[RMDB]
Chemical mapping of a 170-nucleotide RNA with DMS and 2A3. DMS adducts were read by reverse transcription with MarathonRT. For 2A3 the reverse transcriptase was SuperScript II with manganese. Reactivities are rounded to 0.1 and cut off at 0 and 3. Values cover nucleotides 27 to 129.
RNA sequence: GGGAACGACUCGAGUAGAGUCGAAAAAAUCCACACGGAGUAGAGCAGAGAAAUCACCUCCAGAGGACCCCUUCAGCGAACAGAGAGCGCUGCGAGCGAGGAGUAAGACCAUAGCGAUGGAAAGAGAUAAGUAUGUAGUUCGCUACAUACAAAAGAAACAACAACAACAAC
Reactivity to DMS in 0.01 (KOAc 150mM, MgCl2 10mM, bicine 150mM(pH8.5), 24C), signal-to-noise 9, nucleotides 027 to 129: a040a080u040c020c000a070c100a190c100g000g020a000g040u020a060g000a070g020c070a090g020a060g010a060a060a040u000c040a140c120c010u020c050c060a010g020a160g030g010a090c080c020c020c030u020u010c050a060g000c030g020a040a050c060a080g030a110g020a030g000c070g000c050u010g020c090g020a020g000c070g020a040g010g000a000g030u040a010a010g000a060c010c020a080u030a040g010c070g010a050u030g000g000a030a040a040g020a020g020a040u030a070a110
Reactivity to 2A3 in 0.01 (KOAc 150mM, MgCl2 10mM, bicine 150mM(pH8.5), 24C), signal-to-noise 9, nucleotides 027 to 129: a010a010u030c030c000a050c000a010c070g030g000a020g030u140a060g030a030g080c110a030g060a010g030a130a080a070u090c030a050c040c000u040c020c010a010g010a020g030g010a050c000c010c000c000u040u070c030a020g010c000g040a030a020c040a040g070a010g010a010g080c020g000c050u060g030c040g030a040g010c030g010a030g010g000a020g010u070a040a010g030a020c010c030a060u100a030g040c040g050a040u070g030g030a040a070a030g060a010g010a020u070a140a040